[RMDB]
RNA sequence: GGGAACGACUCGAGUAGAGUCGAAAAUUAAACAUGGUUACCAUAAACAUUCCGUGAAGGUAGCCAUGAACACGGAAUGUUAAAUAAAAGCUGAGCGUUAGGAAAAACCUAAUGCUCAGCAUAAAAAUCUAGGUAUUAACUUCGGUUAAUACCUAGAAAAAGAAACAACAACAACAAC
Reactivity to 2A3 in 0.01 (KOAc 150mM, MgCl2 10mM, bicine 150mM(pH8.5), 24C), signal-to-noise 1, nucleotides 027 to 126: u100u070a100a030a000c020a040u020g030g000u030u060a040c010c000a060u240a100a090a030c010a040u130u070c020c020g000u010g080a080a060g070g000u000a000g020c000c000a020u090g000a030a040c010a000c000g030g000a040a020u080g050u110u130a120a140a020u100a070a070a090a000g040c000u010g000a010g000c000g010u000u010a010g000g000a020a170a010a150a240c010c000u010a000a000u010g020c000u000c000a000g040c000a000u010a000a070a000a000a000
Reactivity to DMS in 0.01 (KOAc 150mM, MgCl2 10mM, bicine 150mM(pH8.5), 24C), signal-to-noise 1, nucleotides 027 to 126: u010u030a060a060a260c050a030u000g020g020u000u000a050c000c000a130u010a070a150a010c020a040u000u000c050c010g010u000g010a080a100g040g000u010a020g000c070c050a040u000g000a080a060c090a020c050g010g010a010a050u020g000u000u000a020a030a140u040a070a130a060a080g000c000u000g020a020g010c000g000u000u000a020g000g000a050a160a060a080a120c000c000u020a000a000u000g000c010u000c030a000g000c000a000u010a020a050a130a100a030